Source: RMDB libraries RFM100 and RFMREP, as collected in RNAgym.
Chemical mapping of a 177-nucleotide RNA with DMS and 2A3.
The reactions ran in a buffer of 150 mM KOAc, 10 mM MgCl2 and 150 mM bicine (pH 8.5), at 24 C.
Reactivities are given for positions 27 through 126.
2A3 adducts were read by reverse transcription with SuperScript II with manganese.
RNA sequence: GGGAACGACUCGAGUAGAGUCGAAAAUAACUCCUACCAUCGGCUACACACUGCUUGACACAUAUUGUUAGAAGCACCUCGCAUCUGCAAGUUCUCUUAAGCAAAAUACUUGCAUUAGGUCUCAGCUGAGUUAUACAAACUUCGGUUUGUAUAACUCAAAAGAAACAACAACAACAAC
Reactivity to DMS in 0.01 (KOAc 150mM, MgCl2 10mM, bicine 150mM(pH8.5), 24C), signal-to-noise 4, nucleotides 027 to 126: u030a140a100c090u000c020c020u000a110c050c060a030u010c030g000g010c010u000a080c110a110c110a110c080u010g000c050u010u000g010a080c110a070c160a100u000a120u010u010g030u000u010a080g010a100a030g010c030a120c080c030u000c050g000c060a050u020c080u010g010c020a010a020g000u010u000c050u020c060u010u010a120a100g030c110a040a050a080a040u000a030c050u000u010g010c000a070u000u000a050g010g000u000c030u000c040a050g020c190u000
Reactivity to 2A3 in 0.01 (KOAc 150mM, MgCl2 10mM, bicine 150mM(pH8.5), 24C), signal-to-noise 9, nucleotides 027 to 126: u100a020a020c040u010c010c000u010a040c020c010a080u070c030g030g000c010u070a040c030a000c010a010c050u030g020c010u040u070g030a030c020a000c020a090u110a080u230u180g050u060u090a050g030a120a000g020c020a020c010c000u050c040g030c020a080u040c030u060g000c010a000a040g020u070u000c060u000c010u110u190a090a030g050c040a020a030a060a050u140a080c020u010u020g000c000a030u030u100a040g010g030u000c020u000c050a020g000c050u040